Chemical mapping of a 177-nucleotide RNA with 2A3 and DMS. The DMS profile rests on 8,741 reads. Source: RMDB library OK1LIB, as collected in RNAgym. Values cover nucleotides 27 to 126. For DMS the reverse transcriptase was MarathonRT. The RNA was probed in 150 mM KOAc, 10 mM MgCl2 and 150 mM bicine (pH 8.5) at 24 C. For 2A3, 5,615 sequencing reads were counted.

RNA sequence: GGGAACGACUCGAGUAGAGUCGAAAAUGAAUCAUUAAGUGCCUAUGCGCGUCAAUUUUUAGGCCAAAUGGACAAACCAGAUGUUGAUACAAUUGAAGGAUUAUCGCCAGCAAUUUCAAUAGAUCAACACAAAUCCUAGAUUCGUCUAGGAUUUGUGAAAAGAAACAACAACAACAAC
Reactivity to 2A3 in 0.01 (KOAc 150mM, MgCl2 10mM, bicine 150mM(pH8.5), 24C), signal-to-noise 7, nucleotides 027 to 126: u120g070a030a040u050c040a010u040u080a250a030g050u130g150c000c000u040a070u110g070c070g010c060g180u090c060a110a110u090u100u070u090u130a010g010g000c000c010a010a030a090u040g030g000a030c040a040a110a050c030c030a050g060a160u080g020u080u040g020a060u040a110c070a070a070u020u040g010a050a030g050g000a020u070u090a080u260c050g020c070c000a030g000c020a080a090u030u070u050c000a010a020u030a060g090a080u050c050a030a040
Reactivity to DMS in 0.01 (KOAc 150mM, MgCl2 10mM, bicine 150mM(pH8.5), 24C), signal-to-noise 4, nucleotides 027 to 126: u020g010a140a060u000c030a040u020u010a070a080g000u020g030c000c000u000a040u030g020c100g030c080g020u010c100a090a060u000u030u010u010u010a030g010g010c000c010a060a030a030u000g000g010a090c070a060a140a260c030c020a090g000a050u020g020u010u000g000a030u000a080c070a050a060u000u010g000a040a040g000g000a150u020u010a060u030c080g000c020c010a050g020c070a060a080u010u010u000c030a030a050u020a090g000a050u000c030a030a070